[RMDB]
RNA sequence: GGGAACGACUCGAGUAGAGUCGAAAACUAAACACACAGAACUCACUAUAUUUUUCAAAGCAUUUUCAUGUCUACCAAAUCCUUUAAUCCCAAGGCAUGAAGGAUGUUGCUAUGAUGCCUAGUUUGCUGUAUUUCUGAUAUUCGUAUCAGAAAUACAAAAAGAAACAACAACAACAAC
Reactivity to 2A3 in 0.01 (KOAc 150mM, MgCl2 10mM, bicine 150mM(pH8.5), 24C), signal-to-noise 5, nucleotides 027 to 126: c010u040a000a090a000c060a000c010a000c000a050g110a180a060c030u030c040a030c020u030a030u020a070u230u180u020u100u110c060a110a080a020g000c010a020u010u000u000u070c000a000u020g010u000c000u030a070c030c060a130a080a090u100c010c010u130u130u120a040a060u040c010c010c010a010a020g010g000c020a000u010g020a010a000g020g010a030u060g020u130u050g000c020u070a060u220g040a020u080g050c000c030u060a110g080u040u110u110g050c050
Reactivity to DMS in 0.01 (KOAc 150mM, MgCl2 10mM, bicine 150mM(pH8.5), 24C), signal-to-noise 9, nucleotides 027 to 126: c030u010a050a070a090c090a080c090a050c080a120g010a100a100c050u000c030a030c040u000a040u000a030u010u010u010u010u010c080a070a100a090g010c020a020u000u000u010u000c010a010u000g000u000c010u000a130c160c100a030a070a070u000c040c030u000u000u000a100a120u000c000c000c000a140a060g010g010c010a010u000g010a020a030g000g010a030u010g010u000u000g010c070u000a060u000g010a060u010g010c060c050u000a080g000u000u010u000g010c170